[RMDB]
RNA sequence: GGGAACGACUCGAGUAGAGUCGAAAAGUCAUAACCAGAAGGAUGACCAAGAAUUGGGUGAAUACUCAUAUGAGCUUAUGCUCCUUCCAUUAACUGCUAGAACAAAUUUCCAUAGGGUCUGCAGCUUCCUGGUACCUACCUAUACUAAACAGCUAGGCUAGUGAUCGAGAUUCGUCUCGAUCACUAGAAAAGAAACAACAACAACAAC
Reactivity to 2A3 in 0.01 (KOAc 150mM, MgCl2 10mM, bicine 150mM(pH8.5), 24C), signal-to-noise 5, nucleotides 027 to 156: g070u040c020a070u050a110a080c010c010a030g050a060a020g070g020a060u080g050a030c030c030a030a070g080a090a200u120u090g020g000g010u090g110a140a060u170a180c020u070c040a060u080a120u200g020a010g020c050u220u170a070u300g010c020u010c010c010u090u060c000c020a080u110u090a060a060c020u040g020c050u090a020g050a090a030c060a060a130a160u100u170u090c090c040a080u140a080g100g010g010u010c030u000g010c020a000g030c010u050u060c020c000u000g030g000u030a020c000c020u020a040c020c000u080a080u090a190c080u110a080a100a060c050a040g040c050u040a010g000g010
Reactivity to DMS in 0.01 (KOAc 150mM, MgCl2 10mM, bicine 150mM(pH8.5), 24C), signal-to-noise 1, nucleotides 027 to 156: g010u040c080a120u000a050a140c040c000a100g020a060a080g020g040a060u010g010a040c030c010a040a160g000a130a170u010u000g030g000g040u000g030a170a120u030a000c000u000c020a180u000a090u030g000a070g000c010u000u000a080u010g050c060u000c000c060u000u000c020c010a110u010u010a060a100c020u000g010c030u000a070g020a020a090c080a070a020a070u000u000u030c030c020a120u000a090g020g030g000u000c040u070g030c030a080g000c030u000u000c050c010u000g020g010u000a070c020c010u000a040c010c000u000a060u010a120c100u000a020a070a110c080a040g030c020u000a070g000g010